[RMDB]
RNA sequence: GGGAACGACUCGAGUAGAGUCGAAAAAGUCCGACUCCGUUAACGGCUAAAACGAAACCCCAACGGAUGCACCUUUUAGUUACUUUCGGUUGACUAAUUGCGUAAAGACUUCACCGAAACAUCCUACUAUCAGGGAUAAUUGAUAGUUCCAGUUCUUCUAGUGUAUACACUUCGGUGUAUACACUAGAAAAGAAACAACAACAACAAC
Reactivity to 2A3 in 0.01 (KOAc 150mM, MgCl2 10mM, bicine 150mM(pH8.5), 24C), signal-to-noise 6, nucleotides 027 to 156: a000g030u030c000c010g010a010c040u010c010c000g010u020u030a040a030c010g000g020c020u070a080a060a070a130c170g130a130a080a070c010c010c010c020a010a000c010g000g000a000u010g000c010a020c000c000u000u000u000u000a000g000u010u010a010c000u040u020u000c000g010g010u010u020g000a000c000u000a000a010u010u050g080c140g060u040a010a020a020g120a060c080u200u110c280a010c010c000g010a000a010a010c020a060u040c010c010u020a170c000u000a010u010c000a010g000g020g000a070u180a130a040u090u010g000a000u000a010g020u020u120c120c070a060g010u030u020c010u000u000
An RNA of 207 nucleotides, treated with 2A3 and read out base by base.